Structure probing data (2A3 and DMS) for a 170-nucleotide construct.
Values cover nucleotides 27 to 129.
The RNA was probed in 150 mM KOAc, 10 mM MgCl2 and 150 mM bicine (pH 8.5) at 24 C.
High DMS reactivity at an A or C suggests that its Watson-Crick edge is free.
[RMDB]
RNA sequence: GGGAACGACUCGAGUAGAGUCGAAAAACACUUACUCCUUCUUGCCUAAAGAAGACGGCGAUGUGUUGUUGGCUGAGUUUGACACUUAUGACCCUAUUUAUAAGAAUGGUGCCAUGUAUAAAGGCAAAAACCAUGUCCUUCGGGACAUGGAAAAGAAACAACAACAACAAC
Reactivity to 2A3 in 0.01 (KOAc 150mM, MgCl2 10mM, bicine 150mM(pH8.5), 24C), signal-to-noise 2, nucleotides 027 to 129: a000c040a030c000u000u120a080c000u000c000c060u000u000c000u000u050g150c000c000u130a000a000a000g020a000a000g040a020c040g000g220c060g000a000u160g000u000g000u060u000g180u000u160g000g020c000u130g070a140g030u120u140u050g230a220c150a000c030u110u050a000u010g000a180c000c000c000u030a010u000u000u270a300u140a130a000g110a030a000u000g000g000u000g000c010c000a000u030g030u040a120u130a210a300a000g000g000c030a030a050a090a050a050
Reactivity to DMS in 0.01 (KOAc 150mM, MgCl2 10mM, bicine 150mM(pH8.5), 24C), signal-to-noise 3, nucleotides 027 to 129: a060c090a060c100u050u000a000c120u010c030c050u120u010c040u000u030g030c140c070u020a090a030a150g030a000a000g000a130c260g000g050c000g030a000u060g040u030g040u040u000g030u050u050g050g000c030u040g010a110g010u000u010u080g000a060c130a060c020u000u060a070u070g020a110c000c010c020u030a120u010u020u040a070u000a090a030g020a000a000u000g030g040u010g030c000c000a040u010g060u000a100u100a010a000a000g020g040c070a070a050a070a100a170